RNA sequence: GGGAACGACUCGAGUAGAGUCGAAAAAAUCAUUGUCAACCCCCGUUCUUCUCCUACCAAGGUUCAGAAUGCAGAAUUAGGUAGCACCUUCUCCGCAAUACGUUACAAUAGGUCCAUUCUGAGAGGAAAGAGCAGAUAUGUUCGCAUAUCUGCUCUUAAAAGAAACAACAACAACAAC
Reactivity to DMS in 0.01 (KOAc 150mM, MgCl2 10mM, bicine 150mM(pH8.5), 24C), signal-to-noise 2, nucleotides 027 to 126: a080a070u000c080a060u020u010g010u000c080a080a100c070c020c010c010c010g000u020u020c020u000u000c040u010c020c020u000a100c100c050a060a090g010g010u010u000c010a080g020a050a050u000g010c120a110g020a050a060u010u000a100g010g010u000a050g030c100a140c070c030u000u000c040u030c050c050g010c080a030a060u000a080c140g020u010u000a020c120a020a080u000a050g020g000u000c030c020a070u000u000c010u000g010a100g000a100g040g010a120